This 177-nucleotide RNA was probed chemically with DMS and 2A3. 2A3 adducts were read by reverse transcription with SuperScript II with manganese. DMS adducts were read by reverse transcription with MarathonRT. The reactions ran in a buffer of 150 mM KOAc, 10 mM MgCl2 and 150 mM bicine (pH 8.5), at 24 C.

[RMDB]
RNA sequence: GGGAACGACUCGAGUAGAGUCGAAAAACGUCGAUUACGAUCGACGAAGGCCAUCACCUUCAUCCACGGACCGUCGGGCACGUACCUGCCCGGAGAAGGAGAGCAAUAGAGGACUUACGAGUCCUCAUUACCUAAUUCCCUUCGGGGAAUUAGGUAAAAAAGAAACAACAACAACAAC
Reactivity to DMS in 0.01 (KOAc 150mM, MgCl2 10mM, bicine 150mM(pH8.5), 24C), signal-to-noise 5, nucleotides 027 to 126: a060c020g010u000c000g000a020u010u010a090c180g010a060u000c000g010a000c000g010a080a040g010g010c030c010a100u020c060a080c010c000u010u010c020a070u010c030c190a160c210g010g000a140c110c020g000u000c020g000g000g000c020a010c050g000u010a080c090c060u010g000c000c010c020g000g000a030g030a040a040g000g010a120g000a060g020c120a090a080u020a110g020a020g010g010a020c010u010u010a090c190g010a050g010u000c000c000u000c000a000
Reactivity to 2A3 in 0.01 (KOAc 150mM, MgCl2 10mM, bicine 150mM(pH8.5), 24C), signal-to-noise 6, nucleotides 027 to 126: a010c000g000u010c000g000a010u020u050a080c220g060a040u000c000g000a010c000g000a030a020g050g000c020c010a060u070c030a040c010c000u030u030c020a210u020c020c040a090c170g030g010a070c010c000g020u030c010g010g000g020c000a010c070g100u270a040c020c000u010g000c000c000c000g020g000a030g010a000a010g040g020a050g020a010g030c050a030a030u070a120g000a000g000g000a000c000u020u040a040c230g070a000g010u000c000c000u000c000a000